[RMDB]
RNA sequence: GGGAACGACUCGAGUAGAGUCGAAAACAGAACUUCGGCGCGAUGGAUAUUCUGUGCACUGAUAAAACCGGCACUCUGACGCAGGAUAAAAUUGUGCUGGAGAAUCACACGGAUAUUUCUGGUAAGCUAUUAUUAGCAGUUUCGACUGCUAAUAAUAAAAAGAAACAACAACAACAAC
Reactivity to 2A3 in 0.01 (KOAc 150mM, MgCl2 10mM, bicine 150mM(pH8.5), 24C), signal-to-noise 9, nucleotides 027 to 126: c020a010g070a070a030c010u030u020c020g020g000c020g000c010g030a010u030g020g040a040u050a020u300u020c010u010g010u010g010c100a050c140u070g040a080u080a140a180a030a050c040c000g040g000c050a020c060u070c040u060g100a120c030g000c040a010g020g020a020u050a050a060a010a020u030u020g000u000g000c000u010g010g000a010g040a010a050u080c030a030c020a020c080g080g010a030u030a080u100u070u020c020u020g060g090u100a100a030g040c040
Reactivity to DMS in 0.01 (KOAc 150mM, MgCl2 10mM, bicine 150mM(pH8.5), 24C), signal-to-noise 7, nucleotides 027 to 126: c060a070g010a090a070c040u010u010c030g010g010c000g020c010g010a030u010g000g000a190u030a030u010u000c010u000g010u010g010c100a070c080u020g000a120u030a080a030a120a150c050c020g000g000c030a110c080u010c030u000g000a200c040g000c010a010g000g000a050u010a010a160a100a030u010u010g010u000g000c000u000g000g000a010g020a110a090u030c070a070c050a050c040g010g010a040u010a040u010u020u000c010u010g000g010u010a080a120g010c140
An RNA of 177 nucleotides, treated with 2A3 and DMS and read out base by base. The 2A3 profile rests on 26,233 reads.